Description: Chemical mapping of a 207-nucleotide RNA with 2A3. Reactivities are given for positions 27 through 156. For 2A3, 912 sequencing reads were counted.
[RMDB]
RNA sequence: GGGAACGACUCGAGUAGAGUCGAAAAUUGCCGAUCGGUUUGGAUGCCACCGUGACGGCUCAAUCACACAAGUGCCAACGAUAACGAGGCGCUCGCUAUUGCUGCGUAACUGACGGCCUGACGGUCUAAAACAGAUUCGUGUUCGCACGAAUCUGAAGACCCUUUCAAUCUUCGGAUUGAAAGGGUCAAAAGAAACAACAACAACAAC
Reactivity to 2A3 in 0.01 (KOAc 150mM, MgCl2 10mM, bicine 150mM(pH8.5), 24C), signal-to-noise 2, nucleotides 027 to 156: u100u060g000c000c000g080a160u060c000g030g150u030u050u150g160g040a100u070g070c020c000a020c000c000g090u050g110a080c060g000g000c020u020c040a050a130u100c000a040c040a070c020a180a040g030u060g050c000c020a100a050c120g030a090u070a150a040c060g010a100g080g060c050g080c110u020c020g000c040u010a040u120u170g000c010u040g000c020g060u070a080a060c000u030g040a030c000g030g000c020c020u080g040a060c050g040g000u010c060u180a100a130a020a070c000a000g010a010u020u000c000g000u010g000u030u020c120g010c060a000c000g030a000a000u000c000u000g000a020a000